[RMDB]
Structure probing data (2A3) for a 177-nucleotide construct. For 2A3 the reverse transcriptase was SuperScript II with manganese. Conditions: 150 mM KOAc, 10 mM MgCl2 and 150 mM bicine (pH 8.5), 24 C.

RNA sequence: GGGAACGACUCGAGUAGAGUCGAAAAAGGGGUACGGACCUCAGCUGAAUCAUGGGAGCUGAAUGUAUGUGUGUCUCUGCCCUCCUGCAUGUGGCAGGUUGAUGGGGAGCACUUACAUGAGACUGGUGUCCGCCUUUGUAUUCGUACAAAGGCGGACAAAAGAAACAACAACAACAAC
Reactivity to 2A3 in 0.01 (KOAc 150mM, MgCl2 10mM, bicine 150mM(pH8.5), 24C), signal-to-noise 2, nucleotides 027 to 126: a000g080g000g000g000u080a130c110g020g110a040c050c000u050c000a000g060c030u140g010a050a100u190c090a080u100g040g070g010a020g000c010u010g120a110a000u000g000u000a000u030g050u000g010u000g300u070c000u000c000u010g020c030c000c000u040c000c000u000g120c080a160u300g100u240g300g000c000a000g000g000u000u000g000a000u000g000g000g080g000a000g000c000a000c020u000u000a000c000a000u030g050a040g030a050c100u100g080g000u000